Chemical mapping of a 177-nucleotide RNA with DMS. The DMS profile rests on 2,220 reads. The RNA was probed in 150 mM KOAc, 10 mM MgCl2 and 150 mM bicine (pH 8.5) at 24 C.

RNA sequence: GGGAACGACUCGAGUAGAGUCGAAAAAGAACUUGGCUGGAGCAUAUCCAUCAUACUCUACCAACUGGGCCGACGAAACCGUGUUAACGGCUCGUAACAUAGGCCUAUGCAGCUCCGACGUCAUGGAGUGAGUGAUAAUCUUCGGAUUAUCACUCACAAAAGAAACAACAACAACAAC
Reactivity to DMS in 0.01 (KOAc 150mM, MgCl2 10mM, bicine 150mM(pH8.5), 24C), signal-to-noise 3, nucleotides 027 to 126: a080g010a080a100c140u000u010g020g000c160u010g020g000a030g030c060a140u000a100u000c040c070a050u000c080a110u000a080c030u010c020u000a110c020c040a020a110c160u010g010g000g030c000c000g020a030c030g000a040a190a100c010c000g000u000g000u000u020a060a030c000g000g010c140u000c000g020u010a070a090c130a120u000a100g020g010c000c000u000a030u000g000c150a180g010c020u000c000c010g000a110c140g010u000c090a050u000g000g000a210